[RMDB]
This 177-nucleotide RNA was probed chemically with 2A3 and DMS. For DMS, 7,121 sequencing reads were counted. Values cover nucleotides 27 to 126.
RNA sequence: GGGAACGACUCGAGUAGAGUCGAAAAGAUAUGGAUGGCGUCGAUAAGCAUGCAUCGGAAACGAUGCCAUGCUUUUGACGACGAGUCCUAAGUCAAAGAGUCAUGUAUGUUCGCAUACAUGACUCAAUCUAUCCGUUACGUUCGCGUAACGGAUAGAAAAAGAAACAACAACAACAAC
Reactivity to 2A3 in 0.01 (KOAc 150mM, MgCl2 10mM, bicine 150mM(pH8.5), 24C), signal-to-noise 4, nucleotides 027 to 126: g030a020u080a010u140g020g000a010u060g240g300c020g000u030c030g050a160u050a300a040g000c000a010u030g000c010a000u000c010g020g030a060a030a010c010g000a010u000g020c070c010a000u000g000c000u020u030u020u050g040a030c000g000a000c000g000a000g010u000c000c000u030a100a030g040u050c060a120a100a050g000a000g000u010c000a010u000g020u000a020u020g030u030u110c300g020c170a000u010a000c000a000u000g000a000c000u000c000a000a010
Reactivity to DMS in 0.01 (KOAc 150mM, MgCl2 10mM, bicine 150mM(pH8.5), 24C), signal-to-noise 6, nucleotides 027 to 126: g000a050u000a280u000g000g010a030u000g010g000c020g010u000c000g010a070u010a030a010g020c000a010u000g000c010a000u010c000g010g010a080a090a170c000g010a010u000g000c280c200a000u000g010c000u000u000u000u000g000a150c020g000a020c020g010a300g000u000c000c000u000a060a130g000u000c040a100a110a090g000a020g000u000c000a010u000g010u000a000u000g010u000u010c240g010c000a000u000a000c000a000u000g000a000c000u000c000a020a020

The RNA was probed in 150 mM KOAc, 10 mM MgCl2 and 150 mM bicine (pH 8.5) at 24 C. The 2A3 profile rests on 10,820 reads. It was measured as part of the RMDB library TTRDEL.